RNA sequence: GGGAACGACUCGAGUAGAGUCGAAAAAUGUUGGUGAUAGUGCGGAAGUUGCAGUUAAAAUGUUUAAAAAAAACUUUUAACGUACCAAUGGAAAAACUCAAAACACUAGUUGCAAAUGCAGAAGCUGACCCCCGAGGAUUCGUCCUCGGGAAAAGAAACAACAACAACAAC
Reactivity to 2A3 in 0.01 (KOAc 150mM, MgCl2 10mM, bicine 150mM(pH8.5), 24C), signal-to-noise 3, nucleotides 027 to 129: a000u180g030u080u050g050g010u080g040a060u040a110g000u030g000c000g030g030a080a020g020u090u050g000c090a050g010u000u010a040a000a010a030u200g050u030u020u090a190a060a000a000a020a000a000a000c010u000u030u000u010a000a000c000g000u050a060c010c000a020a170u130g040g000a120a170a000a050a000c040u050c110a030a050a000a000c010a020c030u040a100g040u030u030g040c020a020a160a000u150g000c060a020g030a240a010g000c020u020g030a030c000c000

Chemical mapping of a 170-nucleotide RNA with 2A3.
2A3 adducts were read by reverse transcription with SuperScript II with manganese.
The data come from the RNA Mapping Database (RMDB), library 15KLIB.
The 2A3 profile rests on 3,279 reads.